[RMDB]
RNA sequence: GGGAACGACUCGAGUAGAGUCGAAAAUCUUGUGGAGAUCCACUUUUCGAGGAUUUCUUCCCUUCCUCCCCUCCGGCCCUUCCUCGACUCGGGUUGGCUCAUCCUCGGCGAGGGCGACGGUCCUCAGUGCCUGUCUCUUUCGAGAGACAGAAAAGAAACAACAACAACAAC
Reactivity to 2A3 in 0.01 (KOAc 150mM, MgCl2 10mM, bicine 150mM(pH8.5), 24C), signal-to-noise 9, nucleotides 027 to 129: u050c020u050u160g060u110g060g030a080g020a080u050c030c020a080c070u100u110u100u140c120g060a110g040g020a050u050u050u020c000u030u040c010c010c000u020u040c000c000u010c000c010c000c000u010c020c000g030g000c000c000c000u020u040c000c000u020c010g040a050c010u010c020g010g000g000u020u040g030g000c030u020c020a100u050c010c010u030c020g040g010c040g010a030g010g010g000c030g040a110c110g080g020u010c000c000u010c020a040g050u060g100c000
Reactivity to DMS in 0.01 (KOAc 150mM, MgCl2 10mM, bicine 150mM(pH8.5), 24C), signal-to-noise 9, nucleotides 027 to 129: u040c080u020u050g030u050g000g000a110g010a070u010c030c050a090c060u030u040u050u050c110g040a030g000g010a080u010u010u010c100u020u010c050c030c030u000u040c030c000u000c010c010c010c000u000c020c000g000g000c030c000c030u000u030c000c020u000c020g000a070c020u010c030g020g020g030u000u000g010g000c040u000c050a090u020c020c010u020c050g000g000c070g000a060g000g000g000c040g000a090c170g050g000u000c020c030u030c050a070g000u040g040c110
Structure probing data (2A3 and DMS) for a 170-nucleotide construct. Values cover nucleotides 27 to 129. It was measured as part of the RMDB library 15KLIB. The reactions ran in a buffer of 150 mM KOAc, 10 mM MgCl2 and 150 mM bicine (pH 8.5), at 24 C. DMS adducts were read by reverse transcription with MarathonRT. The DMS profile rests on 96,084 reads.